Annotation
An RNA of 177 nucleotides, treated with DMS and 2A3 and read out base by base. The reactions ran in a buffer of 150 mM KOAc, 10 mM MgCl2 and 150 mM bicine (pH 8.5), at 24 C. For DMS the reverse transcriptase was MarathonRT. In probing experiments dimethyl sulfate is read out at A N1 and C N3, which are open when not base-paired.
[RMDB]
RNA sequence: GGGAACGACUCGAGUAGAGUCGAAAAGAUAUGGAGGUAGGCCGAUAAGAAGGUAUCGGAAACGAUACUCUUCUUUUGACGGCUGUACUCCUAAGUCAAAACGCAAAUCUGUUCGCAGAUUUGCGAACCCUCUAUAGUUCUUCGGAACUAUAGAGGGAAAAGAAACAACAACAACAAC
Reactivity to DMS in 0.01 (KOAc 150mM, MgCl2 10mM, bicine 150mM(pH8.5), 24C), signal-to-noise 6, nucleotides 027 to 126: g000a020u000a260u010g000g000a020g010g000u040a300g000g010c010c000g010a130u010a010a010g010a020a010g010g000u000a000u000c010g010g000a050a040a080c000g000a020u000a000c000u020c000u000u000c000u000u000u010u000g000a210c060g010g000c000u000g010u010a300c010u000c000c000u000a020a120g000u010c020a090a050a080a220c020g010c000a000a010a000u000c000u000g010u000u030c230g030c010a010g000a010u000u000u000g010c000g000a020a040
Reactivity to 2A3 in 0.01 (KOAc 150mM, MgCl2 10mM, bicine 150mM(pH8.5), 24C), signal-to-noise 3, nucleotides 027 to 126: g020a010u050a020u110g020g000a000g030g040u300a030g060g000c020c030g080a170u120a290a040g000a000a000g020g000u000a010u000c000g010g000a050a000a000c020g000a000u010a000c060u050c010u140u000c000u020u030u040u110g140a040c010g000g000c010u000g020u220a010c010u000c000c000u000a030a000g000u000c010a020a020a110a110c010g000c000a000a020a000u000c000u010g030u070u080c200g040c150a010g000a020u020u000u010g000c000g010a010a000